[RMDB]
RNA sequence: GGGAACGACUCGAGUAGAGUCGAAAAGGGCAGCGUCCCUCUGCUGGGGUCUCCAGCGACGAUAGUGAGCCAACUUCAGGGGGCUGUUGGGCAUUUACUGGGCUGGGUCCUGUCCUGCUGCGCCAAGCUAGCGGGUAGAUUUCGAUCUACCCGCUAGAAAAGAAACAACAACAACAAC
Reactivity to DMS in 0.01 (KOAc 150mM, MgCl2 10mM, bicine 150mM(pH8.5), 24C), signal-to-noise 2, nucleotides 027 to 126: g020g000g030c010a030g010c100g010u000c000c010c000u010c060u000g020c000u020g030g010g010g000u010c040u010c010c020a040g050c040g000a150c160g000a080u010a050g010u010g010a080g010c010c030a030a040c050u010u000c060a120g020g010g000g000g020c290u010g010u020u010g010g020g010c090a060u000u000u000a060c070u000g010g010g000c070u010g000g000g000u010c060c040u000g010u000c010c020u010g000c060u010g020c090g020c050c040a100a140g000
Chemical mapping of a 177-nucleotide RNA with DMS. For DMS, 2,725 sequencing reads were counted. DMS adducts were read by reverse transcription with MarathonRT.